[RMDB]
RNA sequence: GGGAACGACUCGAGUAGAGUCGAAAAAAAGCCGUCGACCUUGAACACCCGAUCGAGAUCCCACAGCGUCAGGCCGUGGGUCAGCACUUCGAGGUCGGGGUGACUGCGGAACCGAGCUUUGUCCAACCUUCUCCAAAGUCUUCGGACUUUGGAGAAGAAAAGAAACAACAACAACAAC
Reactivity to 2A3 in 0.01 (KOAc 150mM, MgCl2 10mM, bicine 150mM(pH8.5), 24C), signal-to-noise 1, nucleotides 027 to 126: a020a020a010g000c000c000g030u100c060g020a080c010c020u000u070g090a140a000c050a170c030c010c030g000a010u010c020g000a010g000a020u020c010c010c000a000c020a000g020c000g210u300c120a030g300g000c010c010g000u010g000g000g050u040c030a020g040c070a030c080u040u060c030g010a000g020g020u000c020g000g030g000g030u010g040a060c020u030g020c060g060g000a010a010c030c000g000a030g030c040u050u020u060g020u000c010c000a050a060c030
Reactivity to DMS in 0.01 (KOAc 150mM, MgCl2 10mM, bicine 150mM(pH8.5), 24C), signal-to-noise 1, nucleotides 027 to 126: a000a000a050g000c060c000g000u020c050g000a140c010c010u030u000g000a140a110c050a100c010c000c000g030a060u000c030g010a190g000a020u000c000c020c000a000c000a010g000c000g030u010c300a160g000g010c020c030g040u000g000g020g000u000c080a030g000c100a080c260u030u010c030g010a300g000g030u000c000g000g010g000g030u000g020a070c100u000g000c140g000g010a100a060c110c010g020a200g000c030u000u000u000g000u000c020c020a070a160c190